RNA sequence: GGGAACGACUCGAGUAGAGUCGAAAACAUGCCCGUGUACAGGUUGGUCCCGGCUACAAUCCUCCCCGAGAACUCGAAGACGCGUAUCUCGAGGCUAGGCGUGACUAUAGACUCGAGGCUAUACGGGGCGUAGCCCUACAUUCGUGUAGGGCUACGCAAAAGAAACAACAACAACAAC
Reactivity to 2A3 in 0.01 (KOAc 150mM, MgCl2 10mM, bicine 150mM(pH8.5), 24C), signal-to-noise 2, nucleotides 027 to 126: c010a030u160g070c000c000c020g000u050g000u030a090c080a030g040g040u030u110g040g020u090c000c040c010g060g000c020u090a080c030a080a110u080c010c030u040c000c060c010c000g030a050g040a100a050c040u010c070g000a110a020g110a090c060g000c000g170u010a070u000c000u010c010g010a000g000g000c010u020a030g010g050c020g110u090g020a080c020u070a060u010a300g000a040c000u000c010g000a020g000g000c010u030a020u030a070c030g030g020g000
Reactivity to DMS in 0.01 (KOAc 150mM, MgCl2 10mM, bicine 150mM(pH8.5), 24C), signal-to-noise 4, nucleotides 027 to 126: c130a100u000g010c020c010c020g020u010g010u000a100c120a090g000g000u010u000g010g000u010c020c020c070g010g000c040u000a090c130a080a090u000c040c040u000c010c010c000c010g020a100g000a080a090c080u000c070g010a070a110g000a140c090g000c050g010u000a060u000c000u000c010g010a020g000g000c030u000a020g000g020c160g010u000g000a120c050u010a130u000a040g000a030c010u000c010g000a020g000g000c130u010a060u000a040c010g010g000g010
An RNA of 177 nucleotides, treated with 2A3 and DMS and read out base by base. The reactions ran in a buffer of 150 mM KOAc, 10 mM MgCl2 and 150 mM bicine (pH 8.5), at 24 C. For DMS, 4,734 sequencing reads were counted.